[RMDB]
Record summary:
An RNA of 177 nucleotides, treated with 2A3 and DMS and read out base by base. The RNA was probed in 150 mM KOAc, 10 mM MgCl2 and 150 mM bicine (pH 8.5) at 24 C. Reactivities are given for positions 27 through 126.
RNA sequence: GGGAACGACUCGAGUAGAGUCGAAAAGCUGGACUCAAGCCAGCAUAGAACUGCUAACGGGAAGACAGCUGUUCGGAAGACAGUACGAUGUCAUGUAUAUGCAGGAGUGAGAGUAGAAGAGGUGGAAUCUCUGGAUGUCGUUCGCGACGUCCAGAGAAAAAGAAACAACAACAACAAC
Reactivity to 2A3 in 0.01 (KOAc 150mM, MgCl2 10mM, bicine 150mM(pH8.5), 24C), signal-to-noise 2, nucleotides 027 to 126: g010c000u000g000g010a040c020u010c120a020a060g030c000c000a000g000c010a000u040a030g020a050a030c000u020g000c010u020a070a010c020g040g030g060a040a020g020a010c000a010g000c000u000g000u050u030c020g020g030a070a010g010a000c000a000g010u050a050c050g020a030u020g010u040c000a030u020g040u040a100u000a010u140g020c020a000g000g010a010g000u100g060a020g000a010g010u020a000g000a000a000g010a010g000g000u000g010g010a010a060
Reactivity to DMS in 0.01 (KOAc 150mM, MgCl2 10mM, bicine 150mM(pH8.5), 24C), signal-to-noise 4, nucleotides 027 to 126: g000c010u000g000g000a060c080u030c200a110a090g000c010c010a030g000c020a060u020a050g000a090a130c050u000g000c030u000a060a140c070g020g000g020a110a060g000a060c080a050g000c010u000g000u020u000c020g000g020a140a110g000a040c020a020g010u020a100c150g030a140u010g000u010c010a070u020g010u010a060u020a020u010g010c040a040g000g000a030g000u000g010a030g000a050g020u030a060g000a000a020g000a100g000g030u010g000g000a090a070
Overview: For DMS the reverse transcriptase was MarathonRT.